[RMDB]
RNA sequence: GGGAACGACUCGAGUAGAGUCGAAAAGAUAUGGAGUACGAGUUCCUGUGCCGAUGUUGAGACGAAUGUCGGAAACGACAUCCGUCAAUGAUGCAUCUUUGGGCACAGGAACUCGUACUCCUAAGUCCUAUUAAACGAAGUUCGCUUCGUUUAAUAGAAAAGAAACAACAACAACAAC
Reactivity to DMS in 0.01 (KOAc 150mM, MgCl2 10mM, bicine 150mM(pH8.5), 24C), signal-to-noise 4, nucleotides 027 to 126: g000a110u010a300u010g010g010a030g020u000a010c000g010a030g010u000u000c000c000u000g010u010g000c010c000g010a010u000g020u000u000g000a160g010a020c000g000a020a000u000g010u000c000g000g000a090a090a250c000g010a020c000a010u000c010c000g030u000c000a160a120u010g010a120u010g000c000a010u000c020u000u010u010g030g020g010c000a010c010a010g010g000a000a000c000u000c000g000u000a000c000u000c010c000u000a020a080g010u000c030